[RMDB]
About this RNA: Chemical mapping of a 177-nucleotide RNA with 2A3 and DMS. The data come from the RNA Mapping Database (RMDB), library OK2TST. Reactivities are given for positions 27 through 126. The RNA was probed in 150 mM KOAc, 10 mM MgCl2 and 150 mM bicine (pH 8.5) at 24 C. For DMS, 5,227 sequencing reads were counted. For 2A3 the reverse transcriptase was SuperScript II with manganese.
RNA sequence: GGGAACGACUCGAGUAGAGUCGAAAAAGCGCUUGCAGCCAUAGCAUUGGUGCUGCUGGCAUUAGGAAUGCUGGGCAAUGUUAUUGUGCAACCCACACAUGAUGGCUAUCUGGAUGCCAGUUUGGGGAAACUACUAGCCAUUCGUGGCUAGUAGUUUAAAAGAAACAACAACAACAAC
Reactivity to 2A3 in 0.01 (KOAc 150mM, MgCl2 10mM, bicine 150mM(pH8.5), 24C), signal-to-noise 2, nucleotides 027 to 126: a000g070c070g020c020u060u050g020c010a050g130c040c000a110u110a010g040c000a020u000u100g030g000u090g020c030u030g020c050u030g010g010c000a000u040u040a050g060g080a120a030u070g000c000u040g020g020g010c020a040a050u020g080u090u110a170u270u170g010u040g000c050a170a300c000c070c000a010c000a010c010a050u220g030a060u090g090g000c020u040a060u170c090u170g120g000a030u060g020c020c000a030g030u070u120u130g020g020g010g030
Reactivity to DMS in 0.01 (KOAc 150mM, MgCl2 10mM, bicine 150mM(pH8.5), 24C), signal-to-noise 4, nucleotides 027 to 126: a060g000c070g030c050u000u000g010c050a070g010c040c040a110u010a070g010c030a050u000u000g000g030u010g010c040u000g020c080u000g000g000c010a030u010u010a130g010g020a100a090u000g010c030u000g000g010g010c020a090a050u010g010u000u000a050u010u000g020u000g010c040a100a150c020c010c010a170c130a050c080a070u000g000a100u000g010g010c010u000a230u010c100u000g010g010a070u010g010c010c020a030g020u010u000u000g000g000g000g000